[RMDB]
RNA sequence: GGGAACGACUCGAGUAGAGUCGAAAAGACAAAUGCAGCAUAUUAGGCUAAGCAGGAAAGGGACGGUAGCUCCUGGUGUCAGUUCAUACGGUGUGAUGCAUCUGCCUCGUGCACACAUGCACCCAAAGCUAGCUUCUAAUUUCGAUUAGAAGCUAGCAAAAGAAACAACAACAACAAC
Reactivity to DMS in 0.01 (KOAc 150mM, MgCl2 10mM, bicine 150mM(pH8.5), 24C), signal-to-noise 4, nucleotides 027 to 126: g010a070c080a050a090a080u000g010c040a030g020c020a050u000a080u000u010a090g020g010c020u000a080a120g010c040a070g010g020a060a080a070g000g000g020a060c070g010g020u000a100g000c070u000c020c020u000g010g010u000g010u000c040a060g020u000u010c070a070u010a060c090g010g010u000g000u000g010a110u000g000c010a020u000c070u000g010c030c030u000c090g020u010g010c010a040c060a030c100a050u000g000c070a120c010c020c020a050a080a140
Reactivity to 2A3 in 0.01 (KOAc 150mM, MgCl2 10mM, bicine 150mM(pH8.5), 24C), signal-to-noise 3, nucleotides 027 to 126: g020a010c040a020a100a020u100g000c010a010g010c010a020u040a090u240u140a090g100g010c010u040a050a030g030c040a020g010g100a050a070a050g040g010g020a010c060g030g080u040a040g030c020u000c010c020u010g020g040u030g020u050c050a050g060u070u100c020a040u090a170c070g000g030u040g020u020g050a090u010g000c000a030u020c020u080g010c000c000u040c060g040u050g010c010a000c000a000c000a020u010g060c010a060c000c020c000a030a020a000
An RNA of 177 nucleotides, treated with DMS and 2A3 and read out base by base. Source: RMDB library M2PK90, as collected in RNAgym. Reactivities are given for positions 27 through 126. For 2A3, 4,496 sequencing reads were counted. DMS adducts were read by reverse transcription with MarathonRT. For DMS, 4,722 sequencing reads were counted. The reactions ran in a buffer of 150 mM KOAc, 10 mM MgCl2 and 150 mM bicine (pH 8.5), at 24 C.